RNA sequence: GGGAACGACUCGAGUAGAGUCGAAAAGAUAUGGAACCAUACAAGGAGCUCAUCGGAAACGAUGGAGCGCGAAACUUGACGUGGUUCCUAAGUCAAACCGAUUGCCGAGUUCGCUCGGCAAUCGGAAUCUGUAUGCAUCCUUCGGGAUGCAUACAGAAAAAGAAACAACAACAACAAC
Reactivity to DMS in 0.01 (KOAc 150mM, MgCl2 10mM, bicine 150mM(pH8.5), 24C), signal-to-noise 1, nucleotides 027 to 126: g000a000u010a300u000g000g000a010a030c000c020a010u000a120c000a010a010g000g000a220g010c000u000c000a060u000c010g010g000a090a110a140c010g000a050u000g000g020a010g000c010g040c210g000a150a080a170c010u000u000g000a120c090g020u010g000g070u020u010c000c000u000a020a110g000u000c000a070a110a170c020c000g010a020u000u000g000c000c000g000a000g020u000u040c290g010c000u000c000g000g010c000a000a000u030c000g020g000a000a010
Reactivity to 2A3 in 0.01 (KOAc 150mM, MgCl2 10mM, bicine 150mM(pH8.5), 24C), signal-to-noise 1, nucleotides 027 to 126: g000a020u070a040u160g020g000a010a000c000c000a000u030a030c000a040a000g050g010a070g030c000u000c000a000u010c040g060g040a060a080a040c020g020a000u070g180g170a030g050c010g000c020g190a110a110a150c030u060u020g150a300c130g020u000g000g020u010u000c000c000u020a050a010g040u000c050a000a000a130c010c010g000a000u000u040g000c000c010g000a010g050u040u130c250g100c160u020c010g010g000c000a020a000u000c010g000g000a010a010